[RMDB]
RNA sequence: GGGAACGACUCGAGUAGAGUCGAAAAAGUGCUAUGUUGCCGAUCGUACCAAAUUACAGUCUAAGACUGUAUUAACCUCUCAAUGCAUAGCGCAUACUUGUUCGGACGGCAAUAAUGAAUUACGCCAAGCGCAUUUACGCUUCGGCGUAAAUGCGCUAAAAGAAACAACAACAACAAC
Reactivity to 2A3 in 0.01 (KOAc 150mM, MgCl2 10mM, bicine 150mM(pH8.5), 24C), signal-to-noise 1, nucleotides 027 to 126: a000g260u180g000c000u010a000u100g000u010u030g020c040c020g000a020u070c030g080u130a150c000c000a010a010a010u080u050a000c000a000g010u020c040u100a240a000g020a000c000u000g040u000a050u000u120a060a040c000c020u020c060u090c130a000a070u080g040c050a120u040a160g000c010g000c000a000u090a150c090u170u130g040u100u000c000g030g000a020c070g000g000c000a000a000u140a040a030u180g230a020a270u050u000a020c000g000c000c110a050

About this RNA:
Conditions: 150 mM KOAc, 10 mM MgCl2 and 150 mM bicine (pH 8.5), 24 C. Structure probing data (2A3) for a 177-nucleotide construct. Values cover nucleotides 27 to 126.